[RMDB]
RNA sequence: GGGAACGACUCGAGUAGAGUCGAAAAAAUACCACGAUUUAAUUAUUCGAAUAAAUAGUAGAAUAUUUUUACCUUGAAGUAACAAGGUACUCAAGAGCCUUGAGCCAGAGUGGAAAAUUCUGAGCCAGACUCCAGAAGUAUUCGUACUUCUGGAGUCAAAAGAAACAACAACAACAAC
Reactivity to 2A3 in 0.01 (KOAc 150mM, MgCl2 10mM, bicine 150mM(pH8.5), 24C), signal-to-noise 2, nucleotides 027 to 126: a000a000u210a050c030c000a070c010g000a060u030u090u300a150a060u140u050a050u050u020c000g030a000a030u270a270a170a110u040a090g020u000a030g000a020a000u010a060u030u160u000u000u050a050c010c000u090u010g080a140a010g200u100a110a000c000a010a000g000g000u040a010c050u060c010a050a070g000a000g180c030c030u080u060g000a050g060c020c000a060g040a050g080u010g020g000a000a000a000a190u080u030c000u010g030a030g090c050c010a000